[RMDB]
RNA sequence: GGGAACGACUCGAGUAGAGUCGAAAAUGUAGGCAUUCGGUGAUCAAGGACGAAGGCUGGAGUAUCGAAAGUGAUUAGAUACCGCAGUAGUUCCAGCAGUAAAAGAUGCCGACAUGCUCAUUGGACACAUACGUGGCAACUUCGGUUGCCACGUAUGAAAAGAAACAACAACAACAAC
Reactivity to DMS in 0.01 (KOAc 150mM, MgCl2 10mM, bicine 150mM(pH8.5), 24C), signal-to-noise 1, nucleotides 027 to 126: u000g010u000a080g040g000c000a000u000u000c000g010g010u000g000a090u010c030a100a170g020g000a080c080g000a170a160g010g010c010u000g000g020a070g020u000a000u000c020g000a090a090a050g010u010g000a100u000u000a120g000a020u000a000c010c060g050c070a080g000u000a150g020u000u000c000c000a030g000c090a050g010u000a040a030a100a150g010a010u010g000c000c000g000a000c220a010u000g070c000u000c010a040u010u000g020g000a160c270a200